This 207-nucleotide RNA was probed chemically with 2A3 and DMS. For DMS, 2,286 sequencing reads were counted. The reactions ran in a buffer of 150 mM KOAc, 10 mM MgCl2 and 150 mM bicine (pH 8.5), at 24 C. Reactivities are given for positions 27 through 156. Source: RMDB library M2RFOK, as collected in RNAgym.
RNA sequence: GGGAACGACUCGAGUAGAGUCGAAAAUACUUUGUACGCGCGUAGUUGCAGGCAUUCCGGGUGCAGCAACUGACGCGGAAGACUUUUCCCAGAGUGUGCGCUUCAACUGGCGUGCUGAGUAGUGCACGAAUUGCACGUACGUUCGCGUACGUGCAAAGGUAGAUCGUCUUUUCGAAGACGAUCUACCAAAAGAAACAACAACAACAAC
Reactivity to 2A3 in 0.01 (KOAc 150mM, MgCl2 10mM, bicine 150mM(pH8.5), 24C), signal-to-noise 3, nucleotides 027 to 156: u110a000c030u060u010u000g010u020a010c010g010c000g000c000g060u030a020g000u000u000g000c020a080g150g000c010a050u090u150c120c180g170g040g040u010g000c020a000g010c000a020a000c000u060g140a030c000g010c000g000g000a000a000g180a090c030u180u150u020u020c010c000c000a010g010a020g000u090g000u000g020c000g000c010u060u060c050a220a210c070u030g000g040c040g000u010g000c050u020g020a010g000u070a000g010u020g020c010a000c010g010a090a100u020u010g000c000a000c000g010u010a000c000g010u020u030c240g000c000g090u000a000c000g000u000g010c000a000a000a000
Reactivity to DMS in 0.01 (KOAc 150mM, MgCl2 10mM, bicine 150mM(pH8.5), 24C), signal-to-noise 1, nucleotides 027 to 156: u000a050c030u000u000u000g000u000a060c020g030c000g030c020g010u000a070g010u000u010g010c000a170g050g000c010a050u000u000c010c300g010g020g140u000g010c000a300g010c000a050a040c000u000g000a040c020g000c030g010g030a130a120g030a150c080u000u000u000u000c000c020c020a170g010a120g000u010g080u000g020c050g000c010u000u000c040a100a090c060u000g020g030c060g000u000g010c000u000g010a030g000u000a060g050u010g000c030a020c060g000a110a270u000u000g050c000a000c000g040u000a010c000g030u000u040c300g020c020g000u020a020c020g000u000g000c020a000a020a000